[RMDB]
RNA sequence: GGGAACGACUCGAGUAGAGUCGAAAAACGUGAUGCAUUUGUCCACUCUUGCACAGAAUGGAAUCAUGUUAAACUUACAGUGCAAGAAAGUAAGUUAACCCAUUUAAUUGAUAGCUAUGCUUAGUGUGCAUUCCGUAAUCUUCGGAUUACGGAAUGCAAAAGAAACAACAACAACAAC
Reactivity to 2A3 in 0.01 (KOAc 150mM, MgCl2 10mM, bicine 150mM(pH8.5), 24C), signal-to-noise 2, nucleotides 027 to 126: a000c010g020u000g010a010u020g040c090a180u020u070u300g090u030c010c000a010c030u040c000u040u000g000c020a020c010a020g130a130a150u230g010g010a060a000u000c020a010u020g030u060u130a000a020a000c000u000u000a000c000a020g020u020g070c000a020a010g000a020a020a010g010u010a010a000g000u000u080a120a120c000c020c020a060u030u150u090a260a190u060u170g120a090u110a080g000c050u070a030u140g000c000u070u060a040g040u070g010u010

Record summary
The record gives the reactivity of an RNA of 177 nucleotides to 2A3. Reactivities are rounded to 0.1 and cut off at 0 and 3. The reactions ran in a buffer of 150 mM KOAc, 10 mM MgCl2 and 150 mM bicine (pH 8.5), at 24 C. Reactivities are given for positions 27 through 126.